[RMDB]
Structure probing data (2A3) for a 177-nucleotide construct. The data come from the RNA Mapping Database (RMDB), library RFM100.
RNA sequence: GGGAACGACUCGAGUAGAGUCGAAAAAAUACCCUAGCGCUUAAAGACACUCACCUCCCGCAUAAACAAGCCUCGGGUUAGUAUUUUUGGGGGUUUUGAGCGUCGGAUGGAGCAGGGACUGGAGAUGGGAGAUACUAGCUUUCGAGCUAGUAUCUCCAAAAGAAACAACAACAACAAC
Reactivity to 2A3 in 0.01 (KOAc 150mM, MgCl2 10mM, bicine 150mM(pH8.5), 24C), signal-to-noise 1, nucleotides 027 to 126: a000a000u260a050c030c000c000u000a030g000c030g000c000u000u070a100a000a000g020a000c020a000c150u000c000a030c000c000u000c000c030c000g090c030a080u050a090a070a000c000a030a000g000c000c010u060c070g090g000g000u100u030a050g080u000a140u060u110u060u100u110g010g000g030g030g070u120u000u050u000g020a000g000c010g000u000c000g000g070a040u030g030g000a070g030c000a010g000g000g000a020c130u020g000g150a130g010a020u270g050